[RMDB]
RNA sequence: GGGAACGACUCGAGUAGAGUCGAAAAACUUUUAGCGAUUAUCGUUAUAGAAAUGUCCUUGGCAUAUCGCUAUGCACAGAGGUAUUAGUACCGCAAUAGCUAUUGAAGGACAUUACCUCUCAAAUAAGUUAACCAUUUUCUUCGGAAAAUGGUUAACAAAAGAAACAACAACAACAAC
Reactivity to DMS in 0.01 (KOAc 150mM, MgCl2 10mM, bicine 150mM(pH8.5), 24C), signal-to-noise 2, nucleotides 027 to 126: a070c090u020u000u000u000a020g000c000g000a140u000u000a090u000c040g040u000u000a070u000a120g000a050a040a040u010g010u010c000c000u000u010g010g000c050a030u000a010u000c090g010c010u000a010u010g020c100a100c220a100g000a080g000g000u000a010u000u010a140g030u000a050c000c000g000c040a040a010u000a080g010c080u010a090u000u010g010a090a050g000g000a030c000a020u000u000a020c050c060u010c060u000c100a020a050a090u010a040a080
Reactivity to 2A3 in 0.01 (KOAc 150mM, MgCl2 10mM, bicine 150mM(pH8.5), 24C), signal-to-noise 2, nucleotides 027 to 126: a000c030u140u100u080u090a020g010c020g040a080u110u070a070u300c050g030u030u030a090u060a130g110a020a060a020u070g040u050c000c010u010u020g070g050c060a060u070a000u120c020g010c020u010a030u050g020c060a050c020a110g130a060g020g000u000a010u050u130a110g120u050a130c010c020g000c000a070a030u010a010g050c050u080a030u040u070g060a060a050g000g010a000c010a000u000u000a000c010c000u000c000u000c000a040a140a060u130a150a050